RNA sequence: GGGAACGACUCGAGUAGAGUCGAAAAAUUAUGGCUGAACGCCUCUAAGUCAGAAUCCGUGCUAGAUACAAUGACCUUGUCCCGCGCAUUUACCGUUGUGUCGAAAUAAGGCGUAAGCCUGUGAACCCCUUGACUAACACUUCGGUGUUAGUCAAGGAAAAGAAACAACAACAACAAC
Reactivity to 2A3 in 0.01 (KOAc 150mM, MgCl2 10mM, bicine 150mM(pH8.5), 24C), signal-to-noise 3, nucleotides 027 to 126: a010u260u200a040u060g000g000c020u060g070a170a010c000g010c010c010u000c000u010a060a060g020u040c030a010g060a060a090u030c050c040g050u130g010c040u100a110g010a040u040a090c010a010a090u080g130a090c000c050u020u030g020u030c000c020c020g030c000g000c020a080u030u030u190a070c040c030g000u010u020g020u020g010u030c000g010a030a040a060u160a060a010g020g000c000g000u020a000a000g020c000c010u000g010u000g000a050a060c000c000
Reactivity to DMS in 0.01 (KOAc 150mM, MgCl2 10mM, bicine 150mM(pH8.5), 24C), signal-to-noise 2, nucleotides 027 to 126: a080u030u060a070u020g000g000c000u010g010a140a130c060g000c000c020u000c050u010a090a030g020u000c020a100g000a160a080u030c020c100g020u000g000c040u000a040g000a030u010a030c080a010a010u000g000a110c100c010u000u010g000u000c010c010c000g000c110g000c070a060u000u040u040a050c190c040g000u000u010g040u000g020u000c060g000a020a060a070u020a120a030g000g020c000g000u000a080a090g020c000c040u000g000u030g010a090a150c050c040
This 177-nucleotide RNA was probed chemically with 2A3 and DMS. The reactions ran in a buffer of 150 mM KOAc, 10 mM MgCl2 and 150 mM bicine (pH 8.5), at 24 C. DMS adducts were read by reverse transcription with MarathonRT. The data come from the RNA Mapping Database (RMDB), library RFM100. For 2A3 the reverse transcriptase was SuperScript II with manganese.